[RMDB]
RNA sequence: GGGAACGACUCGAGUAGAGUCGAAAAAGGUUUUGCACUGAGGAGAUGGAAAGAUGUGCGUGGGCGCAAGGGAAAUCAAGAGAGGAGCAGGUUUGUGAGCAGGUCGAGUUCUUUUUUGAUACAAACAAUGAACAAUUAGAAUCUGCCACCUAAAUACAAAAUGAAGCAGAUUCGUCUGCUUCAUUUUAAAAGAAACAACAACAACAAC
Reactivity to 2A3 in 0.01 (KOAc 150mM, MgCl2 10mM, bicine 150mM(pH8.5), 24C), signal-to-noise 3, nucleotides 027 to 156: a020g070g000u050u060u050u070g050c040a020c070u060g010a030g050g030a030g010a040u070g030g050a080a050a040g040a040u070g050u060g030c060g030u040g000g020g030c090g000c030a040a040g040g000g010a030a060a100u090c040a020a020g050a000g020a000g040g030a020g030c000a010g080g000u070u170u140g010u030g010a060g010c010a010g000g000u020c020g020a030g020u020u000c000u040u050u050u000u050u140g070a090u130a120c080a020a110a010c020a050a090u120g000a010a000c020a020a060u210u140a060g050a100a010u020c000u010g010c010c000a010c010c000u080a070a080a160u230a030c030
Reactivity to DMS in 0.01 (KOAc 150mM, MgCl2 10mM, bicine 150mM(pH8.5), 24C), signal-to-noise 3, nucleotides 027 to 156: a080g010g010u010u000u010u020g000c040a100c040u000g020a160g020g000a080g010a100u000g010g020a110a060a070g020a090u010g020u010g020c090g040u010g030g010g010c050g010c080a080a070g010g010g010a050a070a090u020c080a040a080g010a130g000a080g020g010a080g030c070a070g020g010u000u000u000g020u010g010a150g020c030a020g020g020u010c010g000a110g000u000u000c010u020u010u000u000u010u000g030a240u000a200c140a060a060a070c130a040a070u010g010a010a010c030a090a090u000u010a060g010a070a010u000c020u020g020c000c010a040c040c080u010a020a020a080u000a130c180